[RMDB]
RNA sequence: GGGAACGACUCGAGUAGAGUCGAAAAGAUAUGGAUCCGAAGUACGAGAAGGUUUCGGAAACGAAACCCUUCGAUGAGUACCGGAUCCUAAGUCAAACUUCCUACAGCCUUCGGGCUGUAGGAAGAAGUCAUCGAAAUCGUUCGCGAUUUCGAUGACAAAAGAAACAACAACAACAAC
Reactivity to DMS in 0.01 (KOAc 150mM, MgCl2 10mM, bicine 150mM(pH8.5), 24C), signal-to-noise 1, nucleotides 027 to 126: g020a030u000a010u010g000g000a030u000c020c010g010a150a200g060u000a040c000g030a130g020a040a030g000g010u000u000u020c000g000g000a010a020a010c010g000a010a000a000c130c140c240u000u000c040g010a150u000g000a300g010u000a000c050c020g000g010a010u000c000c000u010a000a070g000u030c020a090a210a240c030u000u000c000c000u000a010c000a010g010c000c000u030u020c250g040g010g030c000u000g000u000a010g000g010a000a000g030a040a170
Reactivity to 2A3 in 0.01 (KOAc 150mM, MgCl2 10mM, bicine 150mM(pH8.5), 24C), signal-to-noise 1, nucleotides 027 to 126: g020a000u000a010u070g000g000a010u000c000c060g090a300a170g000u000a030c080g100a050g030a300a010g040g000u020u010u010c000g030g000a010a030a010c000g010a000a000a040c110c070c000u040u040c020g130a280u240g130a020g010u010a010c000c000g000g000a000u000c000c000u000a000a000g010u000c000a050a090a160c010u010u040c000c000u040a000c020a000g000c010c040u160u300c300g070g030g010c000u010g030u000a000g010g000a000a000g000a000a000